[RMDB]
The data come from the RNA Mapping Database (RMDB), libraries RFM100 and RFMREP. An RNA of 177 nucleotides, treated with DMS and 2A3 and read out base by base. The reactions ran in a buffer of 150 mM KOAc, 10 mM MgCl2 and 150 mM bicine (pH 8.5), at 24 C. Values cover nucleotides 27 to 126. DMS adducts were read by reverse transcription with MarathonRT. For 2A3 the reverse transcriptase was SuperScript II with manganese.
RNA sequence: GGGAACGACUCGAGUAGAGUCGAAAAAGACGGUCGGCAGACUUGUACUGAACUGAGUAAUUGUGUAGAUAACUUAACCGAUAAGACUGAUGAGCUAUACUCAUUGUGCCUGAUACUGUACUAAUCGGAACAAUGGGUCUUUCGAGACCCAUUGUUCAAAAGAAACAACAACAACAAC
Reactivity to DMS in 0.01 (KOAc 150mM, MgCl2 10mM, bicine 150mM(pH8.5), 24C), signal-to-noise 2, nucleotides 027 to 126: a030g000a040c050g000g000u000c010g020g010c100a040g010a110c020u000u000g020u030a060c070u010g010a070a120c170u030g000a030g000u000a040a100u060u000g000u030g030u000a060g010a150u000a100a080c040u000u010a070a140c030c020g000a090u000a060a130g020a020c040u000g000a060u020g000a050g000c100u000a030u000a170c020u000c020a020u000u000g030u000g000c030c000u030g000a060u010a040c040u000g010u000a080c050u030a100a070u020c190g040
Reactivity to 2A3 in 0.01 (KOAc 150mM, MgCl2 10mM, bicine 150mM(pH8.5), 24C), signal-to-noise 3, nucleotides 027 to 126: a000g100a000c030g020g010u030c000g000g120c040a000g000a050c000u090u130g020u030a070c050u080g030a160a020c010u050g050a020g090u060a050a060u090u050g070u010g000u100a070g020a060u020a090a050c010u040u030a060a060c010c020g120a070u050a200a060g070a080c020u020g010a030u010g000a010g000c070u160a050u010a260c020u000c000a010u000u040g060u010g000c030c000u030g000a050u060a170c040u060g010u030a050c010u100a200a000u110c060g010